Source: RMDB library RNAMAK, as collected in RNAgym. Chemical mapping of a 207-nucleotide RNA with 2A3. The RNA was probed in 150 mM KOAc, 10 mM MgCl2 and 150 mM bicine (pH 8.5) at 24 C. High 2A3 reactivity points to a flexible backbone, as in loops and unpaired stretches. The 2A3 profile rests on 931 reads.
[RMDB]
RNA sequence: GGGAACGACUCGAGUAGAGUCGAAAAGUGAUCUUCGGAUCACCGCACGGGGUCAUACGUUUGACGUUGUCAGCCUAUCACCUGAAGCCUCCACGGGUGUAAGGGCUUGGAUUUACCGAGUAUGACGGAGGCACCCAUCACGCUCUUUCGAGAGCAAGCGUCCUUCUUUUUUCGAAAAGAAGGACGCAAAAGAAACAACAACAACAAC
Reactivity to 2A3 in 0.01 (KOAc 150mM, MgCl2 10mM, bicine 150mM(pH8.5), 24C), signal-to-noise 2, nucleotides 027 to 156: g020u010g010a040u000c020u050u100c300g040g000a000u000c000a010c010c020g080c020a110c070g070g000g080g060u030c030a010u040a040c070g100u020u140u230g110a110c130g040u140u270g210u220c070a010g000c000c000u050a080u090c000a000c010c000u000g020a090a000g000c000c000u000c000c000a000c000g000g000g000u050g000u020a210a300g100g000g000c000u020u120g110g010a090u210u060u070a010c040c000g000a020g020u040a000u120g010a010c050g010g000a010g040g010c000a020c020c000c000a060u180c070a020c150g010c040u020c020u130u170u140c200g150a030g000a000g010c000a000a000